Record summary
The record gives the reactivity of an RNA of 177 nucleotides to 2A3 and DMS. The RNA was probed in 150 mM KOAc, 10 mM MgCl2 and 150 mM bicine (pH 8.5) at 24 C.

[RMDB]
RNA sequence: GGGAACGACUCGAGUAGAGUCGAAAAGGAAAUGUCGAAGGAUGAUGUCCACCACGCCGUGCUGUCACGUUCUCGGUACCCUCGAUUUCCGUCUCUUCUUGCAUGCGUAUCCAACCGCCUCGCGGCUAGACUGUUUGUUGUUCGCAACAAACAGUCUAAAAGAAACAACAACAACAAC
Reactivity to 2A3 in 0.01 (KOAc 150mM, MgCl2 10mM, bicine 150mM(pH8.5), 24C), signal-to-noise 4, nucleotides 027 to 126: g060g010a030a060a040u150g040u070c040g050a060a060g060g030a050u130g010a040u080g100u010c010c000a020c030c010a040c050g060c050c020g030u030g040c040u050g030u060c020a010c070g030u060u000c040u030c000g040g000u070a100c020c000c000u010c020g050a060u020u020u020c030c010g030u020c010u000c000u040u010c020u010u020g020c040a060u100g020c020g000u040a090u050c020c020a030a080c030c010g020c010c010u020c060g040c020g010g000c000u000
Reactivity to DMS in 0.01 (KOAc 150mM, MgCl2 10mM, bicine 150mM(pH8.5), 24C), signal-to-noise 2, nucleotides 027 to 126: g000g000a070a060a040u010g010u020c040g020a140a080g020g010a090u010g000a090u010g010u000c020c020a060c110c010a110c090g000c120c070g020u000g010c060u000g030u010c000a080c060g000u000u020c030u000c050g000g000u030a070c070c020c000u000c030g000a100u010u000u000c030c010g000u000c020u000c010u020u020c020u000u010g000c050a030u000g020c030g010u040a080u020c030c060a060a130c070c040g010c020c040u000c210g000c050g000g000c140u000